[RMDB]
RNA sequence: GGGAACGACUCGAGUAGAGUCGAAAAUUGGUUAGUUACCUUUCUGAACGCUGUAAUGUUAUUGCUGAUUCUAAGUCCUUCACACUUAUCUUUGGUGGCGUAGCUUACGCCUACUUUGGAUGUGAGGUUAGGUUCUGGUUCGCCAGAACCAAAAGAAACAACAACAACAAC
Reactivity to 2A3 in 0.01 (KOAc 150mM, MgCl2 10mM, bicine 150mM(pH8.5), 24C), signal-to-noise 2, nucleotides 027 to 129: u010u120g060g020u000u010a050g000u000u160a040c000c000u050u050u000c040u080g060a030a000c040g000c020u060g030u170a150a050u210g090u210u100a080u280u150g010c120u030g020a100u000u000c040u030a010a000g040u080c030c000u000u080c090a000c000a070c020u000u130a060u070c000u060u010u010g030g000u000g000g020c000g000u030a090g000c040u070u080a000c000g000c000c000u100a000c000u080u000u070g040g030a000u000g000u000g060a000g000g100u000u050a010
Reactivity to DMS in 0.01 (KOAc 150mM, MgCl2 10mM, bicine 150mM(pH8.5), 24C), signal-to-noise 2, nucleotides 027 to 129: u050u030g030g010u060u040a090g040u020u070a040c040c030u000u010u030c020u010g040a100a060c120g050c060u040g020u050a070a120u040g020u060u000a090u020u000g000c040u030g030a090u020u000c000u040a070a140g030u050c150c000u000u050c020a040c050a170c240u020u070a050u030c000u000u000u020g020g010u000g000g030c000g050u030a050g070c280u000u000a050c050g030c030c010u020a000c060u020u030u000g000g040a000u010g010u040g010a040g020g030u010u030a090

Chemical mapping of a 170-nucleotide RNA with 2A3 and DMS. The data come from the RNA Mapping Database (RMDB), library 15KLIB.